Chemical mapping of a 177-nucleotide RNA with 2A3 and DMS. For 2A3, 4,221 sequencing reads were counted. Conditions: 150 mM KOAc, 10 mM MgCl2 and 150 mM bicine (pH 8.5), 24 C. For DMS the reverse transcriptase was MarathonRT.
RNA sequence: GGGAACGACUCGAGUAGAGUCGAAAAGUACUUAUCUUCGGAUAAGUACAAAUAACAAGAACCGGACGGGUGAGAACCGAGUCAAACACCCACCAAAAUAAAAAAGAUGUGCGUUCGCGCACAUCAACAUUUAAAUAGUCUUCGGACUAUUUAAAUGAAAAGAAACAACAACAACAAC
Reactivity to 2A3 in 0.01 (KOAc 150mM, MgCl2 10mM, bicine 150mM(pH8.5), 24C), signal-to-noise 3, nucleotides 027 to 126: g000u010a000c000u000u000a000u020c010u020u070c220g070g000a000u000a020a000g000u010a000c000a000a000a000u010a020a030c020a010a100g120a080a050c060c020g000g050a040c140g040g000g000u020g000a050g030a030a000c020c020g030a050g160u180c090a010a010a000c010a020c120c090c050a020c010c010a070a110a090a080u220a070a160a070a020a020a030g000a000u010g000u000g010c010g030u020u070c300g000c010g000c060a010c000a000u010c000a000a000
Reactivity to DMS in 0.01 (KOAc 150mM, MgCl2 10mM, bicine 150mM(pH8.5), 24C), signal-to-noise 3, nucleotides 027 to 126: g010u000a000c000u010u000a000u000c010u000u020c170g040g010a010u000a010a000g010u010a000c000a020a090a050u010a100a130c090a100a100g000a150a210c140c010g000g000a110c150g010g010g030u000g030a120g000a070a070c030c010g000a130g010u000c120a050a030a130c060a010c000c000c010a140c180c100a060a050a060a120u030a030a080a130a090a120a070g000a000u000g000u000g000c000g030u000u020c220g010c030g020c010a000c000a000u000c000a040a110